RNA sequence: GGGAACGACUCGAGUAGAGUCGAAAAGCCGGCGCUGUUUCUGUUCUCCGGCAUCUCCUCCGGCGCGGCGGUGGCGCUGAUCGCUAUGGCGUUACGCCAUCGUAGCAACCCGCACAGCACCGAGGCGCUUUUAGUGGGGUUUCGACCCCACUAAAAGAAAAGAAACAACAACAACAAC
Reactivity to DMS in 0.01 (KOAc 150mM, MgCl2 10mM, bicine 150mM(pH8.5), 24C), signal-to-noise 2, nucleotides 027 to 126: g000c010c000g020g030c250g010c050u020g010u010u000u040c020u020g000u020u020c140u000c020c000g000g000c010a050u030c050u020c010c040u000c070c050g020g000c060g040c020g000g000c050g000g000u060g000g020c300g000c030u000g010a070u030c060g000c180u020a010u000g020g000c010g000u060u040a110c050g000c020c010a010u000c050g040u010a050g020c020a090a300c080c000c000g000c040a170c050a160g040c050a050c050c000g040a090g020g040c140g010
Reactivity to 2A3 in 0.01 (KOAc 150mM, MgCl2 10mM, bicine 150mM(pH8.5), 24C), signal-to-noise 5, nucleotides 027 to 126: g000c000c020g010g000c050g000c060u110g060u060u120u040c060u070g090u150u090c080u010c040c010g010g000c000a030u050c040u030c020c000u040c040c050g010g010c010g000c000g050g000c010g000g040u110g060g010c040g010c060u060g110a110u220c050g000c040u080a060u090g050g000c020g110u220u160a110c070g010c000c000a020u120c020g000u020a000g010c010a020a060c010c000c010g010c010a160c030a090g030c000a010c000c020g020a060g030g020c070g050